An RNA of 207 nucleotides, treated with 2A3 and DMS and read out base by base.
RNA sequence: GGGAACGACUCGAGUAGAGUCGAAAAUGACGGUUCGCCGUCAGAAUUGGAUAUGGAGUCCUGUGAGCGCAUGGAGGCUGGAUCGGAAACGAUCCAGAGCAACUCCAUGAACUACGCUCACUGGACUCCUAAGUCGACGAACACCUUUCGAGGUGAAGGAUAGAACAAAGUUCGCUUUGUUCUAUCCAAAAGAAACAACAACAACAAC
Reactivity to 2A3 in 0.01 (KOAc 150mM, MgCl2 10mM, bicine 150mM(pH8.5), 24C), signal-to-noise 4, nucleotides 027 to 156: u030g010a000c000g000g110u090u070c300g070c100c000g030u000c010a010g030a030a220u210u210g110g010a010u010a010u040g000g000a000g010u000c000c000u010g000u010g010a000g000c020g000c030a000u000g010g000a000g020g000c000u000g010g000a000u000c000g000g000a000a000a000c000g000a000u000c000c000a000g000a010g020c050a030a030c000u020c000c000a000u000g000a000a010c040u150a030c040g000c010u000c000a000c000u000g000g000a000c000u000c000c000u000a000a000g000u000c010g040a080c050g060a110a020c000a020c040c000u080u170u180c210g120a030g040g000u020g050a050a050
Reactivity to DMS in 0.01 (KOAc 150mM, MgCl2 10mM, bicine 150mM(pH8.5), 24C), signal-to-noise 2, nucleotides 027 to 156: u000g020a020c000g010g000u010u000c300g060c040c000g000u000c010a020g000a090a130u000u010g020g020a130u000a160u010g000g000a040g010u000c000c000u010g000u030g000a030g020c010g020c010a030u020g020g010a030g030g020c000u000g040g000a000u000c000g020g000a180a070a270c010g000a020u000c000c000a020g000a260g000c080a090a040c000u000c000c000a030u000g020a030a180c030u010a100c020g000c000u000c000a020c000u000g000g010a010c000u000c000c000u000a000a060g000u000c030g000a110c050g000a100a150c010a030c000c000u000u000u000c180g040a140g040g020u000g000a030a160

For 2A3 the reverse transcriptase was SuperScript II with manganese. Reactivities are given for positions 27 through 156. The 2A3 profile rests on 5,389 reads. For DMS the reverse transcriptase was MarathonRT. The reactions ran in a buffer of 150 mM KOAc, 10 mM MgCl2 and 150 mM bicine (pH 8.5), at 24 C.